[RMDB]
RNA sequence: GGGAACGACUCGAGUAGAGUCGAAAAACUACAUUGGCUUGGGUGAACAAUCAGAUAAUUUUCUUUGUUUCUCGAGUCUUUGCUAAUACAGGCAGUGUUUGCUACACUCCUAUAGAUGAGAUACCCUAAAUCGCGUACUUCGGUACGCGAAAAAGAAACAACAACAACAAC
Reactivity to DMS in 0.01 (KOAc 150mM, MgCl2 10mM, bicine 150mM(pH8.5), 24C), signal-to-noise 3, nucleotides 027 to 129: a030c120u030a130c050a010u010u020g000g010c040u010u030g000g000g000u050g010a040a000c020a040a000u080c130a000g020a090u000a050a030u090u020u020u010c000u100u030u000g020u000u000u000c000u020c000g020a020g030u020c020u000u000u030g000c160u030a070a070u020a110c080a000g000g070c130a000g030u000g040u040u000u130g070c180u050a110c010a030c050u030c000c040u030a090u040a040g000a120u000g020a130g030a090u020a130c030c020c030u030a050a070a110
Reactivity to 2A3 in 0.01 (KOAc 150mM, MgCl2 10mM, bicine 150mM(pH8.5), 24C), signal-to-noise 4, nucleotides 027 to 129: a000c040u080a010c000a040u010u000g030g000c000u000u000g010g000g000u220g010a010a000c040a010a010u280c040a020g020a040u040a140a300u110u170u120u000c010u000u000u000g000u000u030u010c000u000c000g020a010g010u020c000u000u000u000g010c010u050a060a090u150a050c050a060g020g040c030a000g030u000g030u030u160u140g090c020u020a030c010a000c000u030c000c000u020a060u080a030g120a040u200g030a020g000a060u070a080c000c000c000u010a010a030a120
This 170-nucleotide RNA was probed chemically with DMS and 2A3. For 2A3 the reverse transcriptase was SuperScript II with manganese. DMS adducts were read by reverse transcription with MarathonRT. The 2A3 profile rests on 6,424 reads.